This 177-nucleotide RNA was probed chemically with 2A3 and DMS. For 2A3 the reverse transcriptase was SuperScript II with manganese. 2A3 is a SHAPE reagent: it acylates the 2'-hydroxyl of flexible nucleotides of all four kinds. For 2A3, 8,822 sequencing reads were counted. The RNA was probed in 150 mM KOAc, 10 mM MgCl2 and 150 mM bicine (pH 8.5) at 24 C.
RNA sequence: GGGAACGACUCGAGUAGAGUCGAAAAGAUAUGGACGUCAUUAGAGCCAUCGAUCUAUUAUGUGCUGGAUGUAUUCGGAAACGAAUACAUCCACCCUAAUAGGGAGGCUAUUCUGACGUCCUAAGUCCAUUCUACUUGGGUUCGCCCAAGUAGAAUGAAAAGAAACAACAACAACAAC
Reactivity to 2A3 in 0.01 (KOAc 150mM, MgCl2 10mM, bicine 150mM(pH8.5), 24C), signal-to-noise 3, nucleotides 027 to 126: g070a040u130a070u250g000g010a010c000g010u000c010a010u020u050a000g010a010g040c020c010a260u300c110g050a030u000c010u020a010u040u010a080u190g230u180g150c300u030g010g000a010u000g010u010a020u010u010c000g000g000a050a060a090c010g000a000a000u010a000c000a000u000c000c010a000c000c000c000u010a010a010u010a010g030g000g000a020g000g000c000u010a040u020u010c010u010g010a010c010g010u000c010c000u000a010a000g010u000c000
Reactivity to DMS in 0.01 (KOAc 150mM, MgCl2 10mM, bicine 150mM(pH8.5), 24C), signal-to-noise 3, nucleotides 027 to 126: g000a110u010a300u010g000g010a000c000g010u000c000a020u000u010a020g000a020g020c010c020a300u010c240g000a050u020c000u000a000u000u000a000u010g010u010g020c200u000g000g010a010u000g010u000a010u000u000c000g020g010a090a120a240c020g000a020a000u000a010c000a010u000c000c000a010c010c010c060u000a000a010u000a000g000g000g010a020g040g010c000u000a030u000u010c030u000g010a020c000g000u000c000c000u000a010a100g010u010c040